[RMDB]
This 207-nucleotide RNA was probed chemically with 2A3 and DMS. The RNA was probed in 150 mM KOAc, 10 mM MgCl2 and 150 mM bicine (pH 8.5) at 24 C. The data come from the RNA Mapping Database (RMDB), library OK3TST.
RNA sequence: GGGAACGACUCGAGUAGAGUCGAAAAGACCAGCGAAGGAAAUUAAUAAAUGAUGUGGGGUGGUUAUAAUUAUCAUGGACGUUGGGUGAAUCCCAAGGGAAAUAAUGGUCCCAUGCCUGUCCCUUUUUAAGGGCCAUGUCUUGCUGAGUCCUAAGCACAGUAGACUUAACUUCGGUUAAGUCUACUGAAAAGAAACAACAACAACAAC
Reactivity to 2A3 in 0.01 (KOAc 150mM, MgCl2 10mM, bicine 150mM(pH8.5), 24C), signal-to-noise 2, nucleotides 027 to 156: g040a040c020c010a010g030c040g060a050a040g040g040a100a030a050u130u100a080a140u120a190a130a110u140g050a030u070g010u030g040g010g030g020u050g000g040u090u110a070u060a120a080u150u090a040u090c030a020u030g070g000a030c050g030u050u010g020g010g000u120g130a080a110u180c030c000c020a010a010g040g010g030a060a040a000u090a020a050u090g050g010u030c040c000c000a010u080g020c000c000u030g010u070c010c010c000u010u080u070u030u210a040a040g010g000g000c000c020a040u100g030u000c000u040u030g000c000u000g010a030g050u030c010c020u050a060a010g110c070a010
Reactivity to DMS in 0.01 (KOAc 150mM, MgCl2 10mM, bicine 150mM(pH8.5), 24C), signal-to-noise 2, nucleotides 027 to 156: g040a080c040c010a080g020c050g020a140a100g010g000a100a090a110u010u010a120a130u010a130a100a080u010g020a060u000g010u000g000g020g000g000u000g000g010u010u000a030u040a090a070u000u000a090u000c040a090u000g030g020a180c040g000u000u000g020g020g040u000g020a090a180u000c010c000c010a050a150g000g010g010a160a060a070u000a030a080u010g030g000u000c000c030c020a130u000g000c020c020u000g030u000c000c000c020u000u010u010u010u020a040a030g000g010g050c030c040a070u000g010u000c050u000u000g040c030u000g000a180g000u000c010c000u000a030a090g020c120a300